[RMDB]
RNA sequence: GGGAACGACUCGAGUAGAGUCGAAAAGCAUACAACUUCGGUUGUAUGCAACGACAGAGUUGACAGUCAUAAACAACGUAACAUGUGAGUUACAAUAACACAUUGCAGCAGCUUUCGAGCUGCUGAACCUAAGGCUUAAUUUCGAUUAAGCCUUAGGAAAAGAAACAACAACAACAAC
Reactivity to DMS in 0.01 (KOAc 150mM, MgCl2 10mM, bicine 150mM(pH8.5), 24C), signal-to-noise 7, nucleotides 027 to 126: g010c010a000u000a010c000a010a010c000u000u010c210g020g010u000u000g010u000a000u000g020c000a030a090c110g010a060c040a090g000a100g010u000u000g010a110c120a090g010u000c050a100u010a090a080a090c120a070a060c120g010u010a020a050c040a100u010g010u010g000a130g010u000u000a050c100a100a070u010a050a040c080a050c140a090u010u000g010c000a000g000c000a000g000c000u000u000u010c170g010a020g010c000u000g000c000u000g000a030a070
Reactivity to 2A3 in 0.01 (KOAc 150mM, MgCl2 10mM, bicine 150mM(pH8.5), 24C), signal-to-noise 8, nucleotides 027 to 126: g000c000a010u000a000c000a010a010c010u030u080c190g100g000u000u000g000u000a000u000g000c000a000a010c020g030a010c010a050g100a030g100u080u100g080a050c030a040g050u070c030a060u180a110a130a030c050a040a020c100g040u040a020a020c010a050u120g100u060g210a090g050u040u060a020c020a020a060u170a090a020c090a010c020a110u090u300g050c000a000g000c000a000g010c000u040u040u180c260g080a000g010c000u000g000c000u000g000a000a000

The record gives the reactivity of an RNA of 177 nucleotides to DMS and 2A3. Source: RMDB library M2PK50, as collected in RNAgym. For DMS the reverse transcriptase was MarathonRT.